[RMDB]
The record gives the reactivity of an RNA of 177 nucleotides to 2A3. Conditions: 150 mM KOAc, 10 mM MgCl2 and 150 mM bicine (pH 8.5), 24 C.
RNA sequence: GGGAACGACUCGAGUAGAGUCGAAAAUACAAGACCGACCAGGGCAUCAAAAACUUGCCUGUUGGAGAGGCAGGAAGGCUUGCUCAGGAAGAUCCGGAUUAUGGCCUCCGAGAUCUUUUCAAUGCCACGCACCUAACCACUUCGGUGGUUAGGUGCGAAAAGAAACAACAACAACAAC
Reactivity to 2A3 in 0.01 (KOAc 150mM, MgCl2 10mM, bicine 150mM(pH8.5), 24C), signal-to-noise 2, nucleotides 027 to 126: u210a000c000a160a070g130a130c030c000g030a040c000c000a040g000g040g020c010a060u110c230a120a130a080a000a010c000u000u070g030c000c000u210g100u000u120g110g050a160g000a010g050g050c060a000g030g020a050a120g010g070c000u000u030g040c030u030c100a050g040g000a000a030g000a000u030c000c010g000g000a030u100u120a120u250g070g030c050c030u000c000c000g210a200g000a110u020c000u010u040u040u000c030a100a000u090g020c000c000a040
The data come from the RNA Mapping Database (RMDB), library OK1LIB.